[RMDB]
RNA sequence: GGGAACGACUCGAGUAGAGUCGAAAAACUAAGCGGUCGCGUAGCGGCCACCUCCCCAUUUAUUGCAAUUGCUUCGCAAUUGUAAAAAAGGUUAACUAUCCACAUUUGAUACGACUAGUACUUUUUGGGCAGGUUAAAAGUUCGCUUUUAACCUGCCAAAAGAAACAACAACAACAAC
Reactivity to 2A3 in 0.01 (KOAc 150mM, MgCl2 10mM, bicine 150mM(pH8.5), 24C), signal-to-noise 1, nucleotides 027 to 126: a010c030u070a090a070g070c000g000g000u010c040g000c060g160u160a040g000c000g000g000c000c000a020c010c000u080c000c000c000c020a010u070u070u290a190u030u100g000c000a040a000u000u000g000c040u160u190c290g000c000a000a000u010u010g010u070a050a050a000a000a000a010g080g000u070u080a020a150c040u020a120u080c050c040a080c010a200u150u200u280g040a000u060a030c050g020a000c060u040a010g060u030a030c010u000u000u030u210u000g060

Description
The data come from the RNA Mapping Database (RMDB), library RFM100. Structure probing data (2A3) for a 177-nucleotide construct. For 2A3 the reverse transcriptase was SuperScript II with manganese. Conditions: 150 mM KOAc, 10 mM MgCl2 and 150 mM bicine (pH 8.5), 24 C.